Source: RMDB library OK2TST, as collected in RNAgym.
An RNA of 177 nucleotides, treated with DMS and read out base by base.
For DMS the reverse transcriptase was MarathonRT.
For DMS, 5,685 sequencing reads were counted.
The RNA was probed in 150 mM KOAc, 10 mM MgCl2 and 150 mM bicine (pH 8.5) at 24 C.

[RMDB]
RNA sequence: GGGAACGACUCGAGUAGAGUCGAAAAUUUUUUCGAUGAAAUCCGGUGUGCCGAAGGGCAACCGCAGCAUCUUCGCUACCGGGUCGAGGAGUCCGCGUGAUGGCUCUUGGCUACGGGCCAUGGUGUCAUACUUUGGAUCUUUCGAGAUCCAAAGUAUAAAAGAAACAACAACAACAAC
Reactivity to DMS in 0.01 (KOAc 150mM, MgCl2 10mM, bicine 150mM(pH8.5), 24C), signal-to-noise 4, nucleotides 027 to 126: u000u010u010u000u000u000c020g010a030u000g000a130a130a140u010c020c000g000g000u000g010u000g020c090c030g020a040a030g020g000g000c010a080a070c150c210g010c190a090g000c020a060u010c010u010u000c020g010c010u000a020c010c010g010g000g020u000c010g000a040g000g010a190g000u000c020c030g030c090g010u010g010a050u000g000g010c000u000c010u010u000g010g010c030u000a050c150g010g000g000c000c010a000u000g010g010u000g000u010c090